Notes: Source: RMDB library TTRDES, as collected in RNAgym. Chemical mapping of a 177-nucleotide RNA with 2A3 and DMS. The 2A3 profile rests on 2,935 reads. For 2A3 the reverse transcriptase was SuperScript II with manganese. DMS adducts were read by reverse transcription with MarathonRT.
RNA sequence: GGGAACGACUCGAGUAGAGUCGAAAAGAUAUGGAGCGGUUGUGACAUGAGUAGUGUCGGAAACGACAUAAUACUCAACAGCACAUCGCUCCUAAGUCAAAGGUAGUAAGCUUCGGCUUACUACCAACCGAUUUAGUCAGUUCGCUGACUAAAUCGGAAAAGAAACAACAACAACAAC
Reactivity to 2A3 in 0.01 (KOAc 150mM, MgCl2 10mM, bicine 150mM(pH8.5), 24C), signal-to-noise 2, nucleotides 027 to 126: g010a000u010a020u090g020g010a010g000c000g000g090u220u170g040u180g050a200c140a300u300g000a000g020u010a040g000u000g000u000c020g000g000a010a030a020c000g010a000c000a010u240a220a030u020a110c000u000c030a090a080c120a110g010c000a010c000a000u010c010g000c000u000c010c000u000a030a010g000u000c040a170a040a050g000g020u000a010g020u000a010a000g020c010u070u160c300g020g010c000u000u060a000c000u000a000c000c000a010a000
Reactivity to DMS in 0.01 (KOAc 150mM, MgCl2 10mM, bicine 150mM(pH8.5), 24C), signal-to-noise 2, nucleotides 027 to 126: g020a000u040a240u010g000g010a010g030c000g000g010u010u010g030u000g010a020c020a200u000g010a000g030u010a110g050u000g000u020c010g030g000a070a040a100c000g010a010c010a020u010a130a230u000a020c000u000c000a050a130c300a240g000c000a000c020a010u000c010g060c000u040c000c010u010a000a050g020u000c000a050a170a140g000g000u000a010g000u000a000a000g000c000u010u040c260g050g010c000u000u000a000c000u010a000c000c000a010a010